[RMDB]
RNA sequence: GGGAACGACUCGAGUAGAGUCGAAAACAGGUACACCAGUUCGCCGCGAUGCUUGAAGUGUGAUGCGUCGGAAGGGAUCACCACUGGCAACAAGGUGCCGUGCGACGGCCGCACCCCACUGUGCGCCGUUCAGCAUGAUUUUCGAAUCAUGCUGAACAAAAGAAACAACAACAACAAC
Reactivity to DMS in 0.01 (KOAc 150mM, MgCl2 10mM, bicine 150mM(pH8.5), 24C), signal-to-noise 9, nucleotides 027 to 126: c110a090g020g020u000a110c070a100c030c040a080g010u000u010c100g030c020c020g010c130g000a070u010g010c050u000u010g010a100a090g020u010g020u000g000a060u010g010c050g020u000c030g010g010a120a100g010g000g010a080u000c070a070c030c030a090c090u010g010g000c030a040a060c070a070a130g000g010u000g000c040c030g020u000g010c080g010a100c060g000g010c060c040g010c010a040c020c030c020c030a090c170u000g010u010g010c080g010c040c040
Reactivity to 2A3 in 0.01 (KOAc 150mM, MgCl2 10mM, bicine 150mM(pH8.5), 24C), signal-to-noise 9, nucleotides 027 to 126: c030a010g020g060u100a030c030a020c030c020a030g040u060u070c060g020c020c010g030c040g040a050u110g030c050u100u130g140a210a100g090u090g060u070g170a060u100g030c040g030u040c020g050g070a060a070g110g010g020a050u090c030a010c060c000a040c070u070g020g000c020a020a020c020a080a070g070g010u030g000c020c010g010u050g030c060g040a070c030g040g010c040c000g000c010a020c010c010c010c000a050c060u090g020u070g050c050g000c020c030